[RMDB]
RNA sequence: GGGAACGACUCGAGUAGAGUCGAAAAGGUUGCUUGAAGCAAUUGCUGACAUAGGUCAUUAUAUCUCUGAGACUGGAAUGGCAAGCUUCUUCUUGACCAUUAAGUAUGGAAUUGAGACUAGAUAUGCGAGUAUCCUUAGAUUCGUCUAAGGAUACUCAAAAGAAACAACAACAACAAC
Reactivity to 2A3 in 0.01 (KOAc 150mM, MgCl2 10mM, bicine 150mM(pH8.5), 24C), signal-to-noise 8, nucleotides 027 to 126: g050g000u050u060g020c050u160u260g190a130a010g010c020a030a130u050u120g090c060u050g030a040c010a090u170a080g030g090u020c020a010u020u200a070u040a070u120c080u000c030u080g150a140g020a100c030u040g080g200a060a040u030g000g000c010a010a020g030c040u180u040c020u110u040c000u040u130g070a230c000c010a010u040u030a050a010g050u040a070u170g050g030a060a060u070u080g020a040g010a030c030u020a050g070a210u110a110u170g090c050
Reactivity to DMS in 0.01 (KOAc 150mM, MgCl2 10mM, bicine 150mM(pH8.5), 24C), signal-to-noise 9, nucleotides 027 to 126: g010g010u000u000g010c040u000u010g010a120a130g020c020a070a050u000u000g010c110u000g010a120c170a090u000a090g010g010u000c020a060u010u010a080u010a090u010c100u000c040u000g010a140g000a050c010u000g010g010a040a030u000g000g000c010a020a020g010c300u010u010c140u010u010c010u000u000g000a160c010c010a020u000u000a050a050g010u000a050u000g000g000a050a070u000u000g000a080g000a050c080u000a080g010a090u010a060u010g010c270